Annotation: Structure probing data (2A3 and DMS) for a 177-nucleotide construct. It was measured as part of the RMDB library TTRINS. The RNA was probed in 150 mM KOAc, 10 mM MgCl2 and 150 mM bicine (pH 8.5) at 24 C. For 2A3, 6,509 sequencing reads were counted.
[RMDB]
RNA sequence: GGGAACGACUCGAGUAGAGUCGAAAAGAUAUGGAAUAUGAAACUACCCAGCGUUGAAAAACGAUAGCUAUUCGGAAACGAAUAGCUAUCGUUUGGAGCUGUGAGUAGCACUCAUAUUCCUAAGUCAGUACAAACUAUAGUUCGCUAUAGUUUGUACAAAAGAAACAACAACAACAAC
Reactivity to 2A3 in 0.01 (KOAc 150mM, MgCl2 10mM, bicine 150mM(pH8.5), 24C), signal-to-noise 3, nucleotides 027 to 126: g040a020u110a070u240g000g010a010a020u020a000u010g060a060a180a140c010u010a000c000c000c010a000g000c020g300u300u070g000a040a050a010a000a000c000g000a000u010a000g040c020u000a000u000u010c020g060g050a150a100a040c000g000a010a000u000a010g010c010u010a000u000c000g000u000u000u010g010g000a010g000c010u000g050u070g140a070g070u020a000g000c030a060c030u000c000a010u000a000u030u030c010c000u010a070a020g070u030c070a020
Reactivity to DMS in 0.01 (KOAc 150mM, MgCl2 10mM, bicine 150mM(pH8.5), 24C), signal-to-noise 5, nucleotides 027 to 126: g000a050u000a300u000g000g000a020a000u000a020u000g000a040a210a270c000u000a000c010c000c000a020g010c000g020u000u020g010a140a120a010a020a010c000g010a020u000a010g010c000u000a010u010u000c000g010g000a140a100a290c000g010a020a000u000a000g000c010u000a000u000c000g020u000u000u000g000g000a090g030c000u000g010u010g000a170g020u000a000g010c090a090c210u010c010a000u000a010u000u000c000c000u000a020a050g010u000c050a140